[RMDB]
RNA sequence: GGGAACGACUCGAGUAGAGUCGAAAAGCAAAAGAUUAUCCAGGUGUAGCGGUGAAAUUCGUAGAGAUCUGGUGGAUAAUGAACCGGUGGCGAAGGCGAAAGAUAACCCCUGAAAAGAAGAAUUGAAACAACCUGAUAGUUUCGACUAUCAGGUUGUAAAAGAAACAACAACAACAAC
Reactivity to DMS in 0.01 (KOAc 150mM, MgCl2 10mM, bicine 150mM(pH8.5), 24C), signal-to-noise 2, nucleotides 027 to 126: g010c060a030a070a080a090g000a110u010u000a060u010c000c000a030g000g030u000g000u000a090g000c040g000g000u010g010a050a060a130u030u000c030g040u000a120g020a090g020a080u000c000u000g020g070u000g000g010a020u010a040a070u000g000a100a070c130c050g000g060u000g010g010c070g010a050a060g000g000c040g000a080a030a060g000a110u010a080a070c050c000c020c030u000g000a050a020a060a110g020a040a050g000a040a090u000u000g000a150a100
This 177-nucleotide RNA was probed chemically with DMS. The reactions ran in a buffer of 150 mM KOAc, 10 mM MgCl2 and 150 mM bicine (pH 8.5), at 24 C. Source: RMDB library M2PK90, as collected in RNAgym.